[RMDB]
RNA sequence: GGGAACGACUCGAGUAGAGUCGAAAAGAUAUGGAUAAAGAGUGUAGACAUGCUACCGGUCGGAAACGACCGAAGUAGCAACAGCUACAUCCUAAGUCAAACAUUCACACCUUCGGGUGUGAAUGAACUCAUCGUUUAACUUCGGUUAAACGAUGAGAAAAGAAACAACAACAACAAC
Reactivity to 2A3 in 0.01 (KOAc 150mM, MgCl2 10mM, bicine 150mM(pH8.5), 24C), signal-to-noise 2, nucleotides 027 to 126: g050a070u210a050u300g050g010a060u100a130a220a030g070a060g050u010g010u060a060g050a110c060a130u110g000c000u000a000c010c010g000g000u010c000g000g010a090a050a000c020g010a000c000c000g020a110a010g000u000a000g010c000a030a030c030a000g010c000u020a010c000a030u000c010c000u040a060a030g000u040c010a060a090a050c000a020u000u010c000a010c000a010c010c000u060u160c300g160g000g000u000g010u000g000a000a000u000g000a000a010
Reactivity to DMS in 0.01 (KOAc 150mM, MgCl2 10mM, bicine 150mM(pH8.5), 24C), signal-to-noise 2, nucleotides 027 to 126: g010a170u010a060u000g020g000a040u000a040a300a030g010a090g010u000g000u000a040g010a050c070a190u010g010c000u000a000c010c000g000g000u000c000g020g000a070a120a190c000g000a010c020c010g000a030a040g020u000a000g000c000a020a080c280a090g000c020u010a000c020a020u000c010c000u000a050a270g010u000c010a100a080a220c000a000u000u010c000a000c000a000c000c000u000u020c230g010g010g010u000g010u000g000a000a000u000g010a040a190
An RNA of 177 nucleotides, treated with 2A3 and DMS and read out base by base. Reactivities are given for positions 27 through 126. The RNA was probed in 150 mM KOAc, 10 mM MgCl2 and 150 mM bicine (pH 8.5) at 24 C.